[RMDB]
RNA sequence: GGGAACGACUCGAGUAGAGUCGAAAAAGCAGGUCGGCGACGGCUCCCGGGAAGAGACUCUCGGGCGCCAGCUGACGGAUUGCAAUGUCACCACGCGCGGGGAUAGAUCCUCUGCAGACGACUGAAAAGAUAUAACAUGAUUCGUCAUGUUAUAUCUAAAAGAAACAACAACAACAAC
Reactivity to 2A3 in 0.01 (KOAc 150mM, MgCl2 10mM, bicine 150mM(pH8.5), 24C), signal-to-noise 9, nucleotides 027 to 126: a000g040c030a020g020g030u000c000g010g010c020g030a130c080g070g000c000u010c000c000c000g000g010g010a090a050g170a040g100a140c060u000c000u000c000g000g000g000c000g000c000c000a000g000c000u000g000a000c000g000g040a100u090u070g010c010a010a070u100g060u060c030a050c150c000a040c040g050c010g000c030g010g000g020g000a020u090a170g140a110u090c000c010u010c040u070g000c000a020g040a100c050g020a040c050u110g050a050a080a020
Reactivity to DMS in 0.01 (KOAc 150mM, MgCl2 10mM, bicine 150mM(pH8.5), 24C), signal-to-noise 9, nucleotides 027 to 126: a110g010c030a040g010g010u000c000g010g020c010g010a130c210g000g000c010u000c010c000c010g010g010g010a020a060g000a210g000a210c100u000c000u000c010g010g010g010c080g000c010c000a090g000c010u000g000a010c010g010g010a100u050u010g000c010a080a060u020g000u010c050a150c040c020a140c120g020c100g010c020g020g000g000g000a100u020a120g000a120u020c010c000u010c010u030g060c020a080g010a090c110g000a090c040u010g000a080a070a110